[RMDB]
RNA sequence: GGGAACGACUCGAGUAGAGUCGAAAAGAUAUGGACACAUGUGGGAGCGACUGGUCGGAAACGACCACUCGCGUUGAUCACAGUGUCCUAAGUCAAAAUCUCAAAACUGGUUCGCCAGUUUUGAGAACCUGGAACAUAACUUCGGUUAUGUUCCAGGAAAAGAAACAACAACAACAAC
Reactivity to DMS in 0.01 (KOAc 150mM, MgCl2 10mM, bicine 150mM(pH8.5), 24C), signal-to-noise 2, nucleotides 027 to 126: g010a020u010a010u020g000g000a030c000a000c010a090u010g010u010g010g020g030a000g040c000g010a010c300u000g000g040u020c000g020g010a000a000a020c010g020a020c000c010a000c070u000c010g010c000g010u000u010g020a100u010c020a010c000a030g000u000g020u010c000c000u000a000a060g000u000c000a130a070a120a200u000c010u000c000a000a000a010a010c000u010g010g000u000u000c300g050c000c000a020g010u000u000u000u000g000a000g010a000a030
Source information: Conditions: 150 mM KOAc, 10 mM MgCl2 and 150 mM bicine (pH 8.5), 24 C. Chemical mapping of a 177-nucleotide RNA with DMS. The data come from the RNA Mapping Database (RMDB), library TTRDES.